Source: RMDB library M2RFPK, as collected in RNAgym. The record gives the reactivity of an RNA of 207 nucleotides to DMS and 2A3. For DMS the reverse transcriptase was MarathonRT.
RNA sequence: GGGAACGACUCGAGUAGAGUCGAAAAAGCUGGUAGUACUACGGUACUACCAGCAUAAUUCGUGGUUCGAAAACCUCCCACGCAUAAAAACUAAGGAAAAACGCCGAGUAGUACGCUACUCGGCGAAGGUACCGGAAUCAGUUCGCUGAUUCCGGAAGUAUCAUAAUAUCUUCGGAUAUUAUGAUACAAAAGAAACAACAACAACAAC
Reactivity to DMS in 0.01 (KOAc 150mM, MgCl2 10mM, bicine 150mM(pH8.5), 24C), signal-to-noise 1, nucleotides 027 to 156: a120g000c000u020g010g020u010a040g020u000a040c000u010a080c300g080g010u000a010c000u000a000c000c000a000g000c010a010u000a050a140u000u000c040g010u000g000g000u000u000c000g010a080a110a150a280c040c020u010c010c010c010a050c020g060c120a160u030a020a040a020a030a030c300u010a060a050g010g010a010a050a090a080a110c050g010c000c000g000a020g010u000a010g000u000a110c180g010c000u010a010c000u000c000g010g000c010g000a000a010g000g000u000a100c000c000g010g000a020a010u000c000a000g050u000u010c290g030c010u000g000a020u000u000c000c000g000g000a030a020
Reactivity to 2A3 in 0.01 (KOAc 150mM, MgCl2 10mM, bicine 150mM(pH8.5), 24C), signal-to-noise 3, nucleotides 027 to 156: a010g000c000u000g000g000u010a010g000u010a000c000u010a010c180g060g000u000a000c000u000a000c010c000a000g000c000a000u000a010a040u060u060c010g000u020g010g050u060u140c130g040a100a090a090a170c010c000u020c000c020c000a030c010g040c020a070u210a150a110a050a090a050c060u100a060a150g070g020a100a100a030a010a000c010g000c010c000g000a000g000u010a000g010u010a000c130g020c070u000a000c000u010c020g000g000c000g000a000a000g000g020u020a040c000c000g000g000a000a000u000c000a010g070u080u110c160g010c100u000g000a000u000u000c000c000g000g000a000a000
For 2A3 the reverse transcriptase was SuperScript II with manganese. Conditions: 150 mM KOAc, 10 mM MgCl2 and 150 mM bicine (pH 8.5), 24 C.